An RNA of 170 nucleotides, treated with 2A3 and DMS and read out base by base. It was measured as part of the RMDB library 15KLIB. Reactivities are given for positions 27 through 129. For DMS, 11,824 sequencing reads were counted.
RNA sequence: GGGAACGACUCGAGUAGAGUCGAAAACCCAGAAAUCUCCUUUGAUUCCCAGAGAGAAUCAGGAGAAAACUGGCUCUCCCUUAGCCAUCCGAGUGGACGUCUGUCCUCCUUCGGAUGCCCAGGUCGGUAAGUCGUUGCUUCGGCAACGACAAAAGAAACAACAACAACAAC
Reactivity to 2A3 in 0.01 (KOAc 150mM, MgCl2 10mM, bicine 150mM(pH8.5), 24C), signal-to-noise 5, nucleotides 027 to 129: c010c000c000a000g020a030a280a000u010c000u020c010c040u090u050u230g020a000u020u000c020c050c110a070g070a000g010a010g000a150a000u010c000a000g000g000a010g000a000a000a000a010c000u000g020g000c010u010c040u010c000c000c000u010u080a050g030c040c000a000u000c010c000g000a010g040u030g010g000a000c000g160u100c170u220g010u000c010c000u010c030c020u100u070c010g000g000a010u010g000c000c000c000a040g010g060u070c060g010g000u100a110a030
Reactivity to DMS in 0.01 (KOAc 150mM, MgCl2 10mM, bicine 150mM(pH8.5), 24C), signal-to-noise 5, nucleotides 027 to 129: c130c000c000a000g030a020a100a130u010c010u000c000c010u030u090u060g010a060u020u020c010c020c140a070g030a130g010a220g000a020a040u030c040a040g000g000a020g020a010a000a090a170c050u000g000g080c000u030c050u000c010c000c030u060u030a130g010c130c040a020u010c030c010g010a060g030u010g000g000a010c010g070u060c000u160g030u030c020c010u030c070c060u050u030c010g010g000a050u040g040c050c060c020a090g010g030u060c050g030g060u070a110a030